[RMDB]
Chemical mapping of a 177-nucleotide RNA with 2A3 and DMS. The 2A3 profile rests on 1,375 reads. In probing experiments dimethyl sulfate is read out at A N1 and C N3, which are open when not base-paired. For DMS the reverse transcriptase was MarathonRT. Conditions: 150 mM KOAc, 10 mM MgCl2 and 150 mM bicine (pH 8.5), 24 C. Reactivities are given for positions 27 through 126.
RNA sequence: GGGAACGACUCGAGUAGAGUCGAAAAUAGAUCGGUGAGCAGUGGCGGUGCUAUCCGUUUCCUAGCGUUACGUCAGAUCCUCUACGAGGAAUGACAACAGCGCACAGUAUUAUCUCUGUAGAGGAACCUGCAUGCAUGUGUUCGCACAUGCAUGCAGAAAAGAAACAACAACAACAAC
Reactivity to 2A3 in 0.01 (KOAc 150mM, MgCl2 10mM, bicine 150mM(pH8.5), 24C), signal-to-noise 1, nucleotides 027 to 126: u110a000g070a020u070c020g000g020u050g010a040g020c020a090g010u040g030g000c020g000g040u000g030c000u010a050u070c030c020g000u000u020u020c020c010u010a060g000c010g020u030u010a020c020g020u000c000a030g020a260u040c020c000u000c020u070a080c100g000a000g000g000a000a000u020g060a020c000a020a030c080a110g020c000g060c020a020c050a030g040u070a130u230u020a190u040c030u000c000u070g080u060a060g020a030g060g000a040a020c020
Reactivity to DMS in 0.01 (KOAc 150mM, MgCl2 10mM, bicine 150mM(pH8.5), 24C), signal-to-noise 1, nucleotides 027 to 126: u000a100g000a030u020c100g030g000u000g000a060g010c030a060g030u020g030g010c030g010g040u000g040c040u010a160u000c060c010g000u010u000u000c000c010u000a210g000c020g010u000u000a100c230g010u000c030a020g010a130u000c000c000u000c010u000a110c220g030a020g010g000a030a040u000g000a030c030a030a160c220a030g020c020g000c010a160c050a110g000u000a120u030u020a170u000c070u000c010u030g010u010a050g010a080g000g000a030a090c180